Chemical mapping of a 177-nucleotide RNA with DMS.
Values cover nucleotides 27 to 126.
It was measured as part of the RMDB library OK2TRN.
RNA sequence: GGGAACGACUCGAGUAGAGUCGAAAACUGAGGCAGGAGAACAGCUUGAACCCAGAGGCGAAGGUUGCAGUGAGCCGAGAUCAUGCCGUUGCACCCCAGCUCAGGUGACAGCGUGAGACUCUGAUGCACCCUGAGAACUCUUCGGAGUUCUCAGGGUAAAAGAAACAACAACAACAAC
Reactivity to DMS in 0.01 (KOAc 150mM, MgCl2 10mM, bicine 150mM(pH8.5), 24C), signal-to-noise 1, nucleotides 027 to 126: c000u010g000a100g000g000c090a190g000g000a090g000a120a150c050a260g000c000u000u000g010a120a050c030c000c090a090g020a080g010g040c080g000a090a130g030g010u000u000g010c050a050g000u000g000a150g020c010c050g010a220g000a060u000c080a040u000g010c070c000g010u020u000g030c050a020c000c010c000c000a200g000c040u000c020a090g020g000u000g000a190c300a000g100c050g080u010g060a210g000a120c020u000c000u000g000a090u030g010c060